Conditions: 150 mM KOAc, 10 mM MgCl2 and 150 mM bicine (pH 8.5), 24 C. This 177-nucleotide RNA was probed chemically with 2A3 and DMS. 2A3 adducts were read by reverse transcription with SuperScript II with manganese. It was measured as part of the RMDB library RFM100. For 2A3, 988 sequencing reads were counted. DMS adducts were read by reverse transcription with MarathonRT. For DMS, 1,518 sequencing reads were counted.
[RMDB]
RNA sequence: GGGAACGACUCGAGUAGAGUCGAAAAUGAAGGUUCAACGAGAGUCCCACUGUCCCCACAUUCAGCCCCGUGAAAUUAAUGUACUGGUGCACAAUCCAGUCUCUCCCACAUGAAAGCGAAGUCCCCGAUGCUCGUCUCAAUUCGUUGAGACGAGCAUAAAAGAAACAACAACAACAAC
Reactivity to 2A3 in 0.01 (KOAc 150mM, MgCl2 10mM, bicine 150mM(pH8.5), 24C), signal-to-noise 2, nucleotides 027 to 126: u130g000a020a000g100g020u000u040c060a060a070c060g030a000g010a000g200u020c020c020c000a020c050u070g020u070c000c000c020c000a000c010a040u060u070c010a000g090c000c000c000c000g040u010g070a030a020a150u180u170a020a140u100g040u090a010c000u000g020g000u070g040c120a010c050a080a010u000c000c000a000g020u000c000u000c000u000c000c010c000a060c030a030u120g100a040a080a000g170c070g000a000a000g040u010c010c000c010c020g000
Reactivity to DMS in 0.01 (KOAc 150mM, MgCl2 10mM, bicine 150mM(pH8.5), 24C), signal-to-noise 2, nucleotides 027 to 126: u000g000a080a210g000g040u000u000c110a100a050c050g000a110g060a070g000u000c000c010c000a110c050u050g040u000c010c000c000c000a160c120a070u000u000c230a140g010c030c000c000c000g020u020g060a030a110a080u020u070a110a090u000g000u000a010c040u000g020g000u000g000c000a080c290a170a070u000c030c010a080g060u000c050u010c040u000c010c020c020a070c240a050u000g050a070a040a150g000c040g000a010a040g030u010c010c010c010c010g020